[RMDB]
RNA sequence: GGGAACGACUCGAGUAGAGUCGAAAAAAGAUAUGGACUCGGACGAAGCUUGGAUUUAUACAGGAACAGUAGUCGGAAACGACUACUUAGUACUGUAUUGUCAGCUUCGGUACGAGUCCUAAGUCAACAUGAGUGUAUCCUUCGGGAUACACUCAUGAAAAGAAACAACAACAACAAC
Reactivity to DMS in 0.01 (KOAc 150mM, MgCl2 10mM, bicine 150mM(pH8.5), 24C), signal-to-noise 2, nucleotides 027 to 126: a080a040g020a030u010a300u010g010g010a000c000u000c000g020g000a250c000g010a000a010g020c010u010u000g050g010a020u010u020u000a000u000a010c010a000g000g010a130a220c300a020g010u010a000g020u000c000g000g000a120a080a160c010g010a030c000u010a020c000u000u000a030g020u000a080c000u000g030u000a000u000u000g000u010c010a020g000c000u000u010c000g000g020u000a050c010g010a010g000u000c000c010u000a010a070g010u000c050a130a300
Reactivity to 2A3 in 0.01 (KOAc 150mM, MgCl2 10mM, bicine 150mM(pH8.5), 24C), signal-to-noise 1, nucleotides 027 to 126: a000a000g080a050u080a030u120g040g000a000c010u010c010g010g000a010c000g010a010a000g010c040u210u270g160g000a020u230u300u110a030u010a000c020a000g000g000a030a000c000a020g030u030a000g000u000c040g000g000a120a110a000c000g010a000c000u020a010c000u000u010a000g000u000a010c000u020g000u000a000u000u000g010u010c000a000g000c010u000u000c000g000g000u050a010c000g010a000g000u020c000c000u020a000a000g010u000c020a000a050